RNA sequence: GGGAACGACUCGAGUAGAGUCGAAAAAGUGCCUCGGGAGACAAUCCUGCGUCUCAUCAGGCGGUCCUUCCAAUACAAGCCAGUCACCAAGGACAUAGAGGAGGCCGCUGAGCUCUUCCAGUACCAGGGCUUUGACCCUGUGUUGGUGACAGCCCAACCGUAGCUAAAAAUUCGUUUUUAGCUACGGAAAAGAAACAACAACAACAAC
Reactivity to 2A3 in 0.01 (KOAc 150mM, MgCl2 10mM, bicine 150mM(pH8.5), 24C), signal-to-noise 4, nucleotides 027 to 156: a000g080u030g000c010c000u060c090g040g000g000a020g000a000c020a060a140u140c020c060u120g060c080g010u010c010u020c020a200u070c040a010g040g000c000g000g040u090c010c000u090u010c020c030a070a030u100a160c050a090a050g040c000c030a030g010u040c020a010c070c010a060a070g050g010a020c020a040u120a060g080a090g010g000a000g020g010c000c010g140c150u130g020a030g010c030u030c020u090u010c000c000a020g000u020a080c030c030a000g010g010g030c060u190u100u240g200a300c000c000c000u000g020u000g000u030u000g020g010u010g010a000c020a000g000c020c010c000a030a050
Reactivity to DMS in 0.01 (KOAc 150mM, MgCl2 10mM, bicine 150mM(pH8.5), 24C), signal-to-noise 2, nucleotides 027 to 156: a170g030u010g030c040c030u000c070g020g000g010a030g000a020c020a080a130u000c110c110u000g020c130g000u000c030u000c060a190u000c030a040g050g030c040g030g030u010c020c000u000u000c030c040a130a170u000a130c090a110a140g000c020c030a220g000u010c040a020c040c030a100a120g020g020a060c090a120u000a080g000a100g040g000a080g020g000c020c080g020c020u000g010a130g010c010u010c010u000u010c050c060a090g000u000a090c100c030a050g040g030g010c000u000u000u020g010a130c010c000c000u010g000u000g020u000u010g020g010u020g030a120c030a020g030c020c000c020a060a300